[RMDB]
Notes: The record gives the reactivity of an RNA of 177 nucleotides to 2A3 and DMS. For DMS, 1,498 sequencing reads were counted. The reactions ran in a buffer of 150 mM KOAc, 10 mM MgCl2 and 150 mM bicine (pH 8.5), at 24 C. Values cover nucleotides 27 to 126. Source: RMDB library RFM100, as collected in RNAgym.

RNA sequence: GGGAACGACUCGAGUAGAGUCGAAAAUAUGGUUUUCUGAUUUUUUUAUGCUCAGUAGUGAUAUGCAAAAAAGACAAAGUUGACAUCAGUUAACUUUUACCUUUAUUCUACUUUCCCCAAAGUAAGACAGCAAUCAUAACUUCGGUUAUGAUUGCUGAAAAGAAACAACAACAACAAC
Reactivity to 2A3 in 0.01 (KOAc 150mM, MgCl2 10mM, bicine 150mM(pH8.5), 24C), signal-to-noise 3, nucleotides 027 to 126: u190a030u010g020g050u060u000u050u020c040u040g100a150u090u030u010u000u000u000u150a180u100g000c020u040c090a100g010u100a020g030u070g100a100u040a050u290g040c070a030a050a000a000a060a000g050a040c070a060a020a020g010u040u020g040a030c020a070u170c100a110g000u050u020a030a000c000u010u020u060u140a090c010c000u070u110u060a060u030u070c010u010a000c000u050u000u050c010c000c000c010a030a050a010g070u020a110a000g070a050
Reactivity to DMS in 0.01 (KOAc 150mM, MgCl2 10mM, bicine 150mM(pH8.5), 24C), signal-to-noise 1, nucleotides 027 to 126: u030a010u030g000g020u000u050u000u000c060u000g000a030u000u010u000u000u010u030u000a050u060g110c130u020c070a010g000u030a090g000u000g000a070u020a080u040g040c020a000a000a030a000a000a030g030a020c170a000a030a030g000u030u010g000a070c100a110u020c110a100g050u000u020a000a000c000u000u000u000u000a060c070c020u000u000u020a060u080u010c040u050a010c090u050u000u000c040c000c000c090a000a060a140g040u000a000a040g070a280